[RMDB]
RNA sequence: GGGAACGACUCGAGUAGAGUCGAAAAAUCCACUGGGUGGGUUCACAUCCCCAACCCGCGGGCCGGCUGUUCUUCUUUCUCUUUCCUCGUCUUCCUCGGUCAACCUCCGGAGUUCCUCUUCCUCCUCGUCCGAGGGCGUUCGCGCCCUCGAAAAGAAACAACAACAACAAC
Reactivity to DMS in 0.01 (KOAc 150mM, MgCl2 10mM, bicine 150mM(pH8.5), 24C), signal-to-noise 4, nucleotides 027 to 129: a000u020c060c000a030c000u030g020g020g080u030g020g000g000u020u000c130a060c000a120u030c090c000c010c130a070a180c050c020c030g140c090g000g000g000c000c070g030g030c070u000g010u020u020c060u030u030c030u020u060u010c040u030c010u010u020u000c050c050u030c060g020u040c030u020u030c050c040u010c040g030g030u030c080a050a100c110c030u040c020c000g030g030a090g040u000u000c040c000u000c050u010u030c070c000u060c010c020u000c040g080u030c100
Reactivity to 2A3 in 0.01 (KOAc 150mM, MgCl2 10mM, bicine 150mM(pH8.5), 24C), signal-to-noise 2, nucleotides 027 to 129: a000u010c000c000a030c100u010g040g060g040u030g010g010g050u100u090c090a050c010a160u090c050c000c000c000a090a110c000c000c000g030c030g000g060g010c000c020g020g030c040u050g050u050u010c020u040u010c000u000u100u010c040u030c000u050u050u050c000c000u040c030g050u020c040u060u020c010c020u010c040g060g000u060c030a080a080c000c010u060c030c000g000g030a030g010u060u040c000c000u000c000u020u010c000c000u000c000c000u040c010g110u000c030

Notes
Chemical mapping of a 170-nucleotide RNA with DMS and 2A3. The 2A3 profile rests on 7,967 reads. The RNA was probed in 150 mM KOAc, 10 mM MgCl2 and 150 mM bicine (pH 8.5) at 24 C. 2A3 adducts were read by reverse transcription with SuperScript II with manganese. DMS adducts were read by reverse transcription with MarathonRT. The data come from the RNA Mapping Database (RMDB), library 15KLIB.